[RMDB]
An RNA of 177 nucleotides, treated with DMS and 2A3 and read out base by base. Source: RMDB library RFMREP, as collected in RNAgym. Values cover nucleotides 27 to 126.
RNA sequence: GGGAACGACUCGAGUAGAGUCGAAAAGCAGAAGUACUGCUCCAGUUGUCACUGGACCUCCCCAGAGUAAACUGCCUUUUGAUGACCAGGGCGAAUUGAGUGAAAUCGUCAUGGACAGAUACGGGGCGUACAUAACAGUCUUCGGACUGUUAUGUACAAAAGAAACAACAACAACAAC
Reactivity to DMS in 0.01 (KOAc 150mM, MgCl2 10mM, bicine 150mM(pH8.5), 24C), signal-to-noise 4, nucleotides 027 to 126: g020c010a000g000a170a170g020u010a130c000u010g010c020u000c000c000a020g010u000u010g010u010c200a140c010u000g000g000a170c020c040u000c000c020c000c020a120g020a200g010u020a030a080a100c130u000g000c000c000u000u000u010u000g000a200u000g010a080c010c010a020g000g010g010c000g000a020a060u000u010g000a170g000u020g010a060a070a070u000c000g020u000c000a030u000g000g010a120c030a020g000a200u000a030c130g010g010g000g010c080
Reactivity to 2A3 in 0.01 (KOAc 150mM, MgCl2 10mM, bicine 150mM(pH8.5), 24C), signal-to-noise 4, nucleotides 027 to 126: g000c010a010g010a200a020g190u190a110c000u010g000c000u000c000c000a020g030u100u150g300u230c130a010c030u000g030g000a040c010c000u010c010c000c000c010a060g050a010g100u190a090a100a090c060u120g000c000c000u040u050u060u120g060a030u040g020a030c000c030a010g020g010g000c030g020a110a100u110u150g100a150g130u210g120a050a080a050u000c000g000u000c000a010u010g000g000a000c000a020g020a030u040a060c050g020g000g020g040c000